[RMDB]
Description:
Chemical mapping of a 177-nucleotide RNA with 2A3. For 2A3 the reverse transcriptase was SuperScript II with manganese.
RNA sequence: GGGAACGACUCGAGUAGAGUCGAAAACUGAACGACCAACAGAUCGGAAUUCCGUAGCAGUGCUUUUCCCAGUAGAAAUAGCUUCGAAUUGGUCUCCAGAAAUCAUCAAAAUCCGCGACGUGGUCGCCAGGGGCGGUACUUUCGAGUACCGCCCCUGAAAAGAAACAACAACAACAAC
Reactivity to 2A3 in 0.01 (KOAc 150mM, MgCl2 10mM, bicine 150mM(pH8.5), 24C), signal-to-noise 2, nucleotides 027 to 126: c040u010g000a060a000c070g030a070c000c020a040a100c010a090g010a070u030c010g110g000a040a150u270u000c000c000g020u010a010g030c020a010g040u050g070c040u070u000u000u000c000c000c060a000g020u060a010g010a040a080a070u190a060g000c000u000u140c070g100a210a190u010u130g030g000u040c040u020c000c020a010g040a030a290a100u050c060a010u020c040a000a000a000a210u000c110c040g010c010g000a080c150g070u120g060g000u000c000g020c000
Conditions: 150 mM KOAc, 10 mM MgCl2 and 150 mM bicine (pH 8.5), 24 C.
Source: RMDB library OK1LIB, as collected in RNAgym.